[RMDB]
RNA sequence: GGGAACGACUCGAGUAGAGUCGAAAACGAUGGUCCAGACGACGACCGACUGAACCCUGAGUUAGCUAUUAAUGCUGCCGCUAAGCAACUUGCAGGUCUGGUAGGGAAGUUUGAUGGCGAUGAACUCGAACACGGCUUUAUUCGUAAAGCCGUGUUCAAAAGAAACAACAACAACAAC
Reactivity to 2A3 in 0.01 (KOAc 150mM, MgCl2 10mM, bicine 150mM(pH8.5), 24C), signal-to-noise 1, nucleotides 027 to 126: c010g080a120u180g040g000u010c020c000a020g030a090c020g020a010c020g020a030c010c010g020a020c020u020g030a020a040c010c050c000u020g000a030g020u030u070a060g000c000u040a030u260u080a120a080u140g020c010u030g130c050c020g000c040u030a030a020g010c010a000a050c020u010u180g030c050a000g000g030u020c050u100g040g020u030a070g010g000g000a130a050g020u000u010u070g070a060u000g000g020c010g000a010u090g040a070a050c030u040c140
Reactivity to DMS in 0.01 (KOAc 150mM, MgCl2 10mM, bicine 150mM(pH8.5), 24C), signal-to-noise 3, nucleotides 027 to 126: c090g000a100u000g000g000u010c010c050a060g000a300c290g010a060c030g000a220c020c010g000a070c040u000g000a060a070c090c000c090u000g030a020g000u000u020a100g020c040u000a170u000u000a090a070u010g020c020u000g020c150c100g000c030u000a050a080g000c040a030a030c020u000u010g030c190a040g010g000u000c030u000g020g030u000a070g000g010g000a030a130g000u000u000u020g000a200u000g010g010c020g010a160u000g020a060a100c130u000c090